The record gives the reactivity of an RNA of 177 nucleotides to 2A3.
2A3 is a SHAPE reagent: it acylates the 2'-hydroxyl of flexible nucleotides of all four kinds.
It was measured as part of the RMDB library RFM100.
The 2A3 profile rests on 474 reads.
Reactivities are given for positions 27 through 126.
The reactions ran in a buffer of 150 mM KOAc, 10 mM MgCl2 and 150 mM bicine (pH 8.5), at 24 C.
[RMDB]
RNA sequence: GGGAACGACUCGAGUAGAGUCGAAAAGAUGAAUCUAAUCCAUGGUCAUCCACUUUAUAAAUACAUAAAAGGACAGUUUUAUGAUUGUCAGCUUUGAGUUGAGGAUAUGUUCCAGACAUCUUAGUUUGAAAUCUUAGCUGUUCGCAGCUAAGAUUUCAAAAGAAACAACAACAACAAC
Reactivity to 2A3 in 0.01 (KOAc 150mM, MgCl2 10mM, bicine 150mM(pH8.5), 24C), signal-to-noise 1, nucleotides 027 to 126: g000a000u060g080a020a120u060c050u040a180a000u080c060c020a050u080g040g030u020c050a020u000c000c020a010c020u080u030u040a150u030a150a000a010u150a060c130a020u110a030a140a000a000g040g000a030c010a000g000u000u010u050u130a070u040g120a070u010u060g030u020c000a010g010c040u000u040u000g040a050g000u000u040g110a090g000g000a000u000a120u120g040u060u000c030c000a000g000a000c000a000u000c000u000u050a060g080u150u000u000